[RMDB]
An RNA of 170 nucleotides, treated with 2A3 and DMS and read out base by base. For DMS, 4,648 sequencing reads were counted. The 2A3 profile rests on 2,014 reads. DMS adducts were read by reverse transcription with MarathonRT.
RNA sequence: GGGAACGACUCGAGUAGAGUCGAAAAUAGUCCGCAUCUUGCAAGAUAAGACUGGCGACUUUAUGUCUACAAUUAUUACUUCCUGCCAAACUGCUGUUAGUAAGCUUCUAGAUACAUGUUUUGAAGCAAAUCGGCUGCUUCGGCAGCCGAAAAAGAAACAACAACAACAAC
Reactivity to 2A3 in 0.01 (KOAc 150mM, MgCl2 10mM, bicine 150mM(pH8.5), 24C), signal-to-noise 2, nucleotides 027 to 129: u040a010g000u000c010c000g000c040a000u000c010u100u180g020c000a180a000g030a070u180a140a000g000a030c000u020g110g030c030g000a040c000u150u180u000a050u160g040u060c000u010a000c140a070a020u130u010a010u040u090a050c030u060u000c000c000u040g020c000c110a120a000a000c060u030g000c000u020g010u110u120a030g000u030a050a000g000c030u000u000c050u060a010g010a010u000a110c040a100u100g050u010u040u000u010g000a020a000g040c000a000a030a030
Reactivity to DMS in 0.01 (KOAc 150mM, MgCl2 10mM, bicine 150mM(pH8.5), 24C), signal-to-noise 3, nucleotides 027 to 129: u000a060g030u020c050c000g060c160a030u030c000u030u010g010c210a100a090g010a090u060a040a150g040a040c110u030g060g000c090g000a080c020u000u000u000a000u010g080u000c040u000a070c120a010a080u070u000a140u000u000a060c200u110u000c000c000u040g000c070c080a050a060a180c190u070g000c000u080g020u000u010a160g000u060a060a080g040c060u000u080c000u020a190g020a000u030a100c260a130u040g030u110u080u060u020g000a000a060g020c070a000a000a000